[RMDB]
RNA sequence: GGGAACGACUCGAGUAGAGUCGAAAAGAUAUGGAGCGAACUACAGUGUAAACAGCUCGUUGAAAGUACCGCUAAUCGGAAACGAUUAGCGGUACUGGAGAGCUGGAAGAAGCUGCGCUCCUAAGUCCUUAAAUGUGUCGUUCGCGACACAUUUAAGAAAAGAAACAACAACAACAAC
Reactivity to DMS in 0.01 (KOAc 150mM, MgCl2 10mM, bicine 150mM(pH8.5), 24C), signal-to-noise 1, nucleotides 027 to 126: g000a060u000a300u000g040g000a000g010c000g010a080a050c160u000a300c010a000g030u000g010u060a000a180a300c000a000g000c000u000c000g000u000u020g000a300a270a010g010u000a000c010c000g000c000u020a000a020u000c000g030g000a080a030a000c060g030a030u000u000a000g000c000g000g010u000a000c000u000g000g010a030g030a000g000c000u000g000g000a000a040g000a120a300g000c010u000g000c000g000c010u000c000c000u000a030a000g000u000c000
The record gives the reactivity of an RNA of 177 nucleotides to DMS.